[RMDB]
RNA sequence: GGGAACGACUCGAGUAGAGUCGAAAAGAUAUGGACGAGGACCGAGAGCAACAGCUAAGCUCGGAAACGAGCUUAGACAUGCUCGAGGUCUCGUCCUAAGUCAAACCCCUGUGUUCGCACAGGGGAACUAACAGUAAAGCUUCGGCUUUACUGUUAGAAAAGAAACAACAACAACAAC
Reactivity to DMS in 0.01 (KOAc 150mM, MgCl2 10mM, bicine 150mM(pH8.5), 24C), signal-to-noise 5, nucleotides 027 to 126: g010a040u000a300u000g010g010a000c000g020a020g040g010a050c000c000g000a300g010a010g010c010a050a090c300a220g010c010u000a010a010g010c000u010c000g000g000a060a090a210c010g010a010g000c000u000u000a010g000a020c090a150u000g020c000u000c000g000a300g000g000u000c000u000c000g000u000c000c010u000a000a060g010u000c040a100a100a200c000c010c000c000u000g020u000g010u000u010c260g000c010a010c000a000g000g000g000g000a000a030
Reactivity to 2A3 in 0.01 (KOAc 150mM, MgCl2 10mM, bicine 150mM(pH8.5), 24C), signal-to-noise 3, nucleotides 027 to 126: g030a020u100a040u170g000g000a000c010g010a090g170g260a130c000c000g010a010g010a010g050c020a010a140c070a120g060c010u000a000a000g000c000u000c010g000g000a030a030a010c010g000a000g000c000u000u000a000g020a030c000a030u060g000c000u000c000g000a000g010g000u000c000u000c000g000u000c000c000u000a000a000g000u000c010a040a040a250c010c000c010c000u000g020u010g040u040u120c300g040c150a000c000a000g010g000g000g000a000a010

The record gives the reactivity of an RNA of 177 nucleotides to DMS and 2A3.
It was measured as part of the RMDB library TTRDES.
High DMS reactivity at an A or C suggests that its Watson-Crick edge is free.